[RMDB]
RNA sequence: GGGAACGACUCGAGUAGAGUCGAAAAGAUGAUUAGUUCGCUAAUCAUCAAAGAACGCUGCAACGCGCAGUGAGCGCGCGAGAGCGAGAAUGCGCGAAGAAAAAAGUUACGGGUUCGCCCGUAACAAUCAAGAAUUGAUCUUCGGAUCAAUUCUUGAAAAAGAAACAACAACAACAAC
Reactivity to DMS in 0.01 (KOAc 150mM, MgCl2 10mM, bicine 150mM(pH8.5), 24C), signal-to-noise 4, nucleotides 027 to 126: g020a010u000g000a010u010u000a010g010u000u010c260g030c000u000a030a010u000c000a010u000c000a080a100a130g000a130a120c040g000c020u000g000c070a160a080c010g000c000g010c000a150g010u000g010a110g010c030g000c020g000c030g010a200g010a090g000c020g000a090g000a140a130u000g000c060g030c020g020a100a140g010a000a040a090a100a120a090g010u000u000a000c010g000g010g000u000u010c230g000c000c000c000g020u000a000a000c010a050a130
Reactivity to 2A3 in 0.01 (KOAc 150mM, MgCl2 10mM, bicine 150mM(pH8.5), 24C), signal-to-noise 3, nucleotides 027 to 126: g000a010u010g000a000u000u010a010g010u030u040c140g000c110u010a000a010u010c000a000u000c000a010a000a010g040a130a020c050g010c050u090g030c060a110a090c040g020c010g000c060a020g090u090g230a080g030c040g000c000g010c010g060a060g000a010g120c060g020a030g040a050a040u090g000c050g000c030g050a060a120g080a090a220a030a060a020a010g010u000u000a000c000g000g030g000u010u060c220g040c030c000c000g010u000a000a000c000a010a010
The record gives the reactivity of an RNA of 177 nucleotides to DMS and 2A3.
For 2A3, 4,076 sequencing reads were counted.
The reactions ran in a buffer of 150 mM KOAc, 10 mM MgCl2 and 150 mM bicine (pH 8.5), at 24 C.
High DMS reactivity at an A or C suggests that its Watson-Crick edge is free.